[RMDB]
RNA sequence: GGGAACGACUCGAGUAGAGUCGAAAAAGCGCAGCGGUACGCCGCUACGCAAGGCGCAUUUGAACUGUAUUGUACGCCUUGCAUAAAGCAAAAGUACUAAAAAAACGUGCCGUUACGACGGCACGAAAAAACAUCCAUUGGUUCGCCAAUGGAUGAACUAACAGAAAUUGUUCGCAAUUUCUGUUAGAAAAGAAACAACAACAACAAC
Reactivity to DMS in 0.01 (KOAc 150mM, MgCl2 10mM, bicine 150mM(pH8.5), 24C), signal-to-noise 2, nucleotides 027 to 156: a120g000c040g040c030a060g040c020g010g020u030a040c070g070c030c000g000c040u010a000c020g000c000a030a010g000g020c010g040c000a030u000u000u010g000a070a250c100u010g000u010a290u000u010g020u010a020c010g040c010c000u000u010g020c040a100u030a020a110a140g040c030a030a070a110a140g010u000a120c050u040a010a000a110a050a080a040a110c070g000u000g000c000c000g040u000u000a170c200g020a120c000g030g000c000a000c000g020a000a010a030a060a100a050c000a000u000c000c000a000u010u000g000g010u000u020c300g000c000c000a000a010u010g000g000a000u000g020a000a100
Reactivity to 2A3 in 0.01 (KOAc 150mM, MgCl2 10mM, bicine 150mM(pH8.5), 24C), signal-to-noise 5, nucleotides 027 to 156: a000g070c050g020c060a020g010c030g010g010u030a010c130g050c040c010g000c020u020a010c060g000c000a000a000g000g000c020g000c030a080u070u080u260g130a180a110c110u140g070u250a110u170u090g030u080a040c020g000c000c000u000u000g000c010a030u120a080a090a010g010c040a000a010a070a040g060u060a050c090u190a040a050a020a030a020a020a020c010g010u000g000c000c000g000u000u030a070c280g020a000c000g050g000c000a000c000g000a010a000a000a000a000a010c000a000u000c000c000a010u000u000g020g020u040u040c140g020c090c000a000a000u000g000g000a000u000g000a000a020